[RMDB]
Background: An RNA of 207 nucleotides, treated with DMS and 2A3 and read out base by base. Values are in units of 0.01, from 0 to 300, in steps of 10. Source: RMDB library OK3TST, as collected in RNAgym. The reactions ran in a buffer of 150 mM KOAc, 10 mM MgCl2 and 150 mM bicine (pH 8.5), at 24 C. 2A3 adducts were read by reverse transcription with SuperScript II with manganese.

RNA sequence: GGGAACGACUCGAGUAGAGUCGAAAACUCCCGUCACUACCCUAGCGACUGGGACGACCUCGAUACUCAGGCAGUUGACACAGCACGUGUACUCGCUGCCGAUGCAGUCCAGAAUUGCGGUUCGGGCCACCCAGGCACUGCAAUGAGCUUGGCACCACCCCAUAUAGUCAUUCGUGACUAUAUGGGGAAAAGAAACAACAACAACAAC
Reactivity to DMS in 0.01 (KOAc 150mM, MgCl2 10mM, bicine 150mM(pH8.5), 24C), signal-to-noise 1, nucleotides 027 to 156: c100u010c000c000c000g000u000c050a050c040u000a080c070c150c140u000a050g040c010g000a110c010u000g040g000g010a100c020g010a170c020c020u000c050g010a230u000a010c020u000c030a120g010g000c000a010g030u010u000g040a140c080a130c040a300g000c110a080c060g040u000g050u000a120c060u000c030g000c020u000g050c000c000g010a110u010g000c050a090g000u000c030c050a150g020a100a130u000u010g000c030g030g050u000u000c010g030g000g000c000c030a130c070c010c000a120g060g000c020a070c000u000g020c030a070a110u000g020a070g040c040u000u000g020g040c020a030c030c040a260
Reactivity to 2A3 in 0.01 (KOAc 150mM, MgCl2 10mM, bicine 150mM(pH8.5), 24C), signal-to-noise 4, nucleotides 027 to 156: c050u010c000c030c010g040u030c020a060c050u130a130c030c050c090u040a020g020c030g090a040c050u250g010g000g050a070c040g060a050c000c030u070c050g060a090u110a250c000u040c120a030g010g000c000a000g010u170u190g020a010c000a010c010a060g160c130a080c270g010u020g030u090a280c030u030c090g020c010u000g000c000c000g000a000u050g010c000a000g000u000c030c010a040g100a280a180u180u150g020c100g010g050u030u090c050g070g020g010c000c020a040c030c020c010a030g040g010c120a000c030u000g000c020a020a140u130g010a030g040c060u070u120g030g000c030a080c000c020a060